[RMDB]
RNA sequence: GGGAACGACUCGAGUAGAGUCGAAAAGAUAUGGAGGAUGGCAGGCAACAGCGUGAGGAUCGGAAACGAUCCCACGACAUGCCUGCAUCCUCCUAAGUCAAAAGAUGCUGACUUCGGUCAGCAUCAACACUUUUACCCACUUCGGUGGGUAAAAGUGAAAAGAAACAACAACAACAAC
Reactivity to DMS in 0.01 (KOAc 150mM, MgCl2 10mM, bicine 150mM(pH8.5), 24C), signal-to-noise 1, nucleotides 027 to 126: g010a020u000a030u000g000g000a010g050g010a000u000g020g040c020a040g010g010c010a090a060c270a130g050c010g000u000g030a200g050g000a010u020c000g010g000a030a030a030c000g000a010u000c010c000c010a000c010g010a030c080a180u040g020c010c000u000g000c000a000u000c000c000u000c000c010u000a000a030g000u000c010a140a140a110a120g000a000u020g010c010u000g010a010c000u000u020c220g000g000u000c000a010g010c000a000u000c010a060a140
Reactivity to 2A3 in 0.01 (KOAc 150mM, MgCl2 10mM, bicine 150mM(pH8.5), 24C), signal-to-noise 2, nucleotides 027 to 126: g010a010u010a000u030g010g000a000g030g020a040u090g250g300c000a010g040g000c110a300a040c130a300g000c010g000u000g000a200g000g000a000u010c000g000g000a010a000a010c000g010a000u000c020c000c000a000c030g000a010c020a100u300g000c010c010u000g000c000a000u020c000c000u000c000c000u000a000a000g000u000c000a030a010a000a060g010a000u000g000c000u030g000a020c000u090u120c300g010g000u000c040a000g000c020a010u000c010a000a000